RNA sequence: GGGAACGACUCGAGUAGAGUCGAAAAGGCCCAAACUUAGUAGCCCCAAGUGGGUAAAAGGCAUGGUUAUUCAAAACCGUUCAAAGCAUACGACGCUCGUCGUUAGGUUUUGCUUUGAACGGUCGCAGUAAGGUUUAUACUUCGGUAUAAACCUUACAAAAGAAACAACAACAACAAC
Reactivity to 2A3 in 0.01 (KOAc 150mM, MgCl2 10mM, bicine 150mM(pH8.5), 24C), signal-to-noise 2, nucleotides 027 to 126: g090g000c010c000c000a020a010a000c010u030u020a000g050u060a020g120c020c030c000c060a190a120g080u300g120g000g000u010a010a010a000a000g010g000c010a020u140g060g070u120u200a120u170u130c040a070a070a010a000c000c000g000u000u000c000a010a000a000g000c000a010u000a030c030g010a000c000g040c070u160c150g300u070c010g000u040u040a070g000g050u040u090u050u060g000c000u000u010u000g010a000a010c000g000g010u000c000g020c000a000
Reactivity to DMS in 0.01 (KOAc 150mM, MgCl2 10mM, bicine 150mM(pH8.5), 24C), signal-to-noise 3, nucleotides 027 to 126: g010g000c020c010c300a070a110a070c040u000u020a060g020u000a150g010c000c000c010c040a100a120g020u030g020g020g010u010a010a050a200a180g000g000c060a210u000g000g010u000u000a070u000u010c090a090a080a120a040c000c000g000u000u000c000a000a020a000g000c000a020u000a030c020g000a010c000g010c080u010c300g010u010c010g010u010u000a050g010g010u000u000u000u000g010c000u000u000u000g000a000a000c000g010g000u000c040g000c120a110
The data come from the RNA Mapping Database (RMDB), library RFMREP. Structure probing data (2A3 and DMS) for a 177-nucleotide construct. The RNA was probed in 150 mM KOAc, 10 mM MgCl2 and 150 mM bicine (pH 8.5) at 24 C. Values cover nucleotides 27 to 126.